This 207-nucleotide RNA was probed chemically with 2A3. Reactivities are given for positions 27 through 156. The RNA was probed in 150 mM KOAc, 10 mM MgCl2 and 150 mM bicine (pH 8.5) at 24 C.

RNA sequence: GGGAACGACUCGAGUAGAGUCGAAAAUUUUUAUCUGUCAGAAACUUCUAUCAUACUAAACACAUAUCUUUUUUUACUGAGCUCAAUAGGAAGUUUGGAACACUUACUUUACUUGAUUUCUCCAUCGUAUGAGAUACUGUUGGAUUCUCCUCCUCCACCAUACGACCGUAUUCGUACGGUCGUAUGGAAAAGAAACAACAACAACAAC
Reactivity to 2A3 in 0.01 (KOAc 150mM, MgCl2 10mM, bicine 150mM(pH8.5), 24C), signal-to-noise 2, nucleotides 027 to 156: u030u060u030u090u140a070u070c000u050g120u040c020a050g130a100a140a110c070u170u150c070u120a050u080c030a040u020a140c050u170a060a300a020c060a010c000a110u050a290u170c080u110u220u060u020u130u090u170a100c050u050g000a010g020c010u000c050a040a200u050a120g090g010a020a010g000u000u090u030g050g040a170a030c070a020c060u010u040a000c010u020u060u050a010c000u020u000g040a060u090u200u140c020u000c010c030a130u100c060g020u110a050u090g090a050g000a040u040a080c030u070g090u070u070g000g010a020u060u000c010u050c040c000u010c010c020u020c020c010a010